[RMDB]
Conditions: 150 mM KOAc, 10 mM MgCl2 and 150 mM bicine (pH 8.5), 24 C. An RNA of 177 nucleotides, treated with 2A3 and DMS and read out base by base. The DMS profile rests on 3,278 reads.

RNA sequence: GGGAACGACUCGAGUAGAGUCGAAAAUCGCGCUCAGAUCGUACGUGAUCGGAUCGUACGUCUAGCAUGCUCAGAGAUGCGGUACAUGUCGAUCGUGAGUACCAGGAUCGUACUACUAGCGCUAGAGUAGAUGGCCAAGAUUCGUCUUGGCCAUCUAAAAAGAAACAACAACAACAAC
Reactivity to 2A3 in 0.01 (KOAc 150mM, MgCl2 10mM, bicine 150mM(pH8.5), 24C), signal-to-noise 3, nucleotides 027 to 126: u050c010g000c000g000c000u030c040a050g030a260u130c050g010u030a000c010g000u040g030a090u130c090g050g040a020u020c030g030u030a000c000g000u000c010u000a030g020c000a030u080g020c000u020c040a050g020a030g010a150u040g030c030g030g030u060a080c050a100u160g070u070c010g000a030u070c040g100u050g060a040g020u050a170c040c020a020g070g020a020u030c020g030u040a010c020u010a010c010u030a060g020c020g030c050u060a020g010a010g030
Reactivity to DMS in 0.01 (KOAc 150mM, MgCl2 10mM, bicine 150mM(pH8.5), 24C), signal-to-noise 4, nucleotides 027 to 126: u010c080g010c100g010c010u010c150a020g000a070u000c060g020u000a000c040g010u000g000a300u010c130g020g000a130u000c040g000u000a020c020g000u010c020u010a120g020c010a170u010g010c040u000c050a070g010a140g010a040u010g000c070g000g020u000a060c110a120u010g000u000c080g000a020u000c020g000u000g020a170g020u010a180c060c050a030g010g000a080u010c020g000u020a010c000u000a160c130u000a060g010c010g010c010u000a070g020a060g010